RNA sequence: GGGAACGACUCGAGUAGAGUCGAAAACGUACUGCGCGUGACAUGAUCGAGGAUCAGGCCGAUCCUCGUGACGAUCGGCCAGUGCAGUGCGCGUACAUGUGGCGCUAUGGCCAGGCGCUAUAUCGUCCCGAUCGUUUAGAUUCGUCUAAACGAUCGGAAAAGAAACAACAACAACAAC
Reactivity to DMS in 0.01 (KOAc 150mM, MgCl2 10mM, bicine 150mM(pH8.5), 24C), signal-to-noise 3, nucleotides 027 to 126: c030g010u000a000c010u000g000c000g010c010g020u030g010a080c060a050u010g020a030u000c000g030a080g010g000a020u000c020a130g000g020c250c100g010a010u000c000c020u000c060g020u000g020a170c300g050a050u000c000g000g020c010c010a120g010u010g020c010a010g050u010g000c000g020c100g020u000a060c140a030u000g020u010g010g000c010g010c010u010a060u000g000g000c050c060a180g000g000c050g020c000u000a010u000a020u000c130g010u010c080
Reactivity to 2A3 in 0.01 (KOAc 150mM, MgCl2 10mM, bicine 150mM(pH8.5), 24C), signal-to-noise 2, nucleotides 027 to 126: c010g000u010a000c000u010g000c000g000c020g160u120g080a050c050a190u150g010a040u030c010g120a030g060g010a030u020c050a010g190g050c020c040g020a010u000c000c030u000c000g030u020g030a020c020g050a100u030c000g020g000c050c040a030g010u000g020c000a000g000u020g000c010g030c020g040u030a020c020a080u150g060u110g080g030c020g030c030u110a090u170g050g000c060c030a020g060g040c040g000c000u010a020u010a010u020c050g030u050c000

An RNA of 177 nucleotides, treated with DMS and 2A3 and read out base by base.
DMS adducts were read by reverse transcription with MarathonRT.
Conditions: 150 mM KOAc, 10 mM MgCl2 and 150 mM bicine (pH 8.5), 24 C.
The data come from the RNA Mapping Database (RMDB), library OK2TRN.